[RMDB]
RNA sequence: GGGAACGACUCGAGUAGAGUCGAAAAAUCACCCCAAUUCGUUGGGGUGAUAAAAAGCGUACUACUACACUAUCGCAGUACGAAUUCCCAAAUAGGAACUAUACUGAACUACGAUUGUGUAGUAUCGCAAAAACCCUUACCUUUCGAGGUAAGGGAAUACUGUUGCUCGAUUCGUCGAGCAACAGUAAAAAGAAACAACAACAACAAC
Reactivity to 2A3 in 0.01 (KOAc 150mM, MgCl2 10mM, bicine 150mM(pH8.5), 24C), signal-to-noise 1, nucleotides 027 to 156: a000u000c000a000c000c000c000c000a010a040u050u020c180g090u120u050g020g000g040g000u000g000a000u010a010a000a000a000a000g000c000g080u060a050c090u000a000c010u000a000c050a000c000u010a000u050c000g000c020a000g000u000a010c050g060a060a300u000u000c000c000c000a050a250a070u180a140g010g000a000a000c010u000a040u030a080c000u010g010a070a030c050u140a040c140g000a000u030u030g000u020g040u030a000g000u000a000u240c030g000c000a080a080a000a000a000c000c000c000u000u000a000c000c000u160u030u160c300g110a020g020g000u010a000a000g020g000g030a000a010
An RNA of 207 nucleotides, treated with 2A3 and read out base by base.
The 2A3 profile rests on 735 reads.
The RNA was probed in 150 mM KOAc, 10 mM MgCl2 and 150 mM bicine (pH 8.5) at 24 C.